[RMDB]
Source: RMDB library RNAMAK, as collected in RNAgym. An RNA of 207 nucleotides, treated with 2A3 and DMS and read out base by base. The DMS profile rests on 8,520 reads. The reactions ran in a buffer of 150 mM KOAc, 10 mM MgCl2 and 150 mM bicine (pH 8.5), at 24 C. For 2A3, 2,105 sequencing reads were counted.
RNA sequence: GGGAACGACUCGAGUAGAGUCGAAAAAGGGUGUUCGCACCCUCCGGAUCCUAAGUCAAUACCGCAGUCGUUUGACGUUCAUUGUCAGUCGGAAACGACUUGGAUUUAUGAACCGAGACUGCGGUAUUGAUAUGGAGUAUAGAUAGUUCGCUAUCAAGAAUACUUUACUUUUCGAAGUAAAGUAUUCAAAAGAAACAACAACAACAAC
Reactivity to 2A3 in 0.01 (KOAc 150mM, MgCl2 10mM, bicine 150mM(pH8.5), 24C), signal-to-noise 2, nucleotides 027 to 156: a000g040g020g000u050g000u050u160c240g030c120a000c000c000c020u030c010c010g070g060a080u030c010c000u040a180a070g020u000c000a000a000u000a010c020c000g000c010a000g010u020c040g120u080u210u230g080a070c040g000u000u010c000a000u000u040g000u010c000a000g010u000c000g030g020a090a090a060c030g000a010c000u040u060g050g000a000u020u300u000a010u010g000a000a000c000c000g000a010g000a050c000u000g000c000g000g000u000a000u010u000g000a000u000a000u010g000g000a000g000u170a000u040a050g030a010u010a010g030u070u120c170g040c190u030a010u100c020a010a070
Reactivity to DMS in 0.01 (KOAc 150mM, MgCl2 10mM, bicine 150mM(pH8.5), 24C), signal-to-noise 3, nucleotides 027 to 156: a030g000g030g040u000g030u000u010c300g030c020a060c000c020c000u000c040c040g050g010a220u000c010c010u000a080a230g010u000c000a030a030u000a010c000c010g010c010a020g010u000c010g020u010u000u000g020a130c140g020u000u010c010a020u000u000g000u010c010a050g000u000c000g000g010a160a110a300c010g010a000c010u000u020g060g010a050u000u000u000a030u010g000a010a020c020c010g010a190g000a010c000u000g010c000g000g000u000a000u000u010g010a010u000a140u000g010g010a080g030u000a120u000a120g000a070u000a060g000u000u000c180g020c020u000a110u000c020a110a300